[RMDB]
RNA sequence: GGGAACGACUCGAGUAGAGUCGAAAACACCGGCCGUACGCGGCCGGUGAAGUAUUGACGUAUACUACCGUAGAAGUAUACAGGUCUCAUAACUACGGAUAAACAUGGCAGGUACGCCUGCCAUGAACGCACUAAUCCACUUCGGUGGAUUAGUGCGAAAAGAAACAACAACAACAAC
Reactivity to 2A3 in 0.01 (KOAc 150mM, MgCl2 10mM, bicine 150mM(pH8.5), 24C), signal-to-noise 1, nucleotides 027 to 126: c000a000c000c000g000g020c030c000g020u050a090c190g010c040g070g000c000c000g000g000u000g000a000a000g040u040a090u070u160g080a020c060g010u010a000u000a000c030u130a180c000c000g000u000a000g000a160a000g080u000a000u000a000c050a000g000g280u000c030u040c130a100u220a100a150c050u010a000c000g050g030a100u210a030a120a000c000a000u000g000g000c020a000g000g000u010a040c200g080c000c000u010g000c000c000a020u000g000a000a010
Conditions: 150 mM KOAc, 10 mM MgCl2 and 150 mM bicine (pH 8.5), 24 C. Structure probing data (2A3) for a 177-nucleotide construct. It was measured as part of the RMDB library OK1LIB.